[RMDB]
RNA sequence: GGGAACGACUCGAGUAGAGUCGAAAACGGGUGUUUGUCUGAAUGCUCUAUACCUAGUGAAACAGGUGAUAUCGGCGCAUCGACUACGUGCCUGUCUCGGCUACGAUCAGCCGGGGUGCAUGUGCCAAGUGUGUGGUCGUUUCGACGAUCACGCGCUAAAAGAAACAACAACAACAAC
Reactivity to DMS in 0.01 (KOAc 150mM, MgCl2 10mM, bicine 150mM(pH8.5), 24C), signal-to-noise 9, nucleotides 027 to 126: c110g010g000g010u000g010u000u010u010g010u020c090u040g010a050a040u010g000c030u000c020u000a100u020a090c010c000u000a050g010u010g020a140a090a090c080a010g000g010u000g010a090u030a050u020c110g000g000c030g010c010a030u000c050g010a090c110u010a060c060g020u010g010c010c070u000g000u010c010u000c000g000g000c000u010a110c300g010a130u040c170a030g010c000c000g000g000g000g010u010g000c060a020u010g010u000g000c020c030a110
Reactivity to 2A3 in 0.01 (KOAc 150mM, MgCl2 10mM, bicine 150mM(pH8.5), 24C), signal-to-noise 9, nucleotides 027 to 126: c020g010g000g000u030g020u020u060u050g240u070c110u160g060a060a020u030g010c000u000c000u020a060u040a090c000c010u030a060g070u030g250a080a040a020c020a020g000g010u020g030a040u040a030u120c050g010g000c010g000c010a020u010c040g050a040c040u100a040c050g050u050g010c000c010u030g010u010c000u000c000g000g000c000u040a040c100g190a170u120c080a010g000c000c000g000g000g000g000u020g000c010a010u020g010u020g010c000c010a020

Source information
Chemical mapping of a 177-nucleotide RNA with DMS and 2A3. Source: RMDB library OK1LIB, as collected in RNAgym.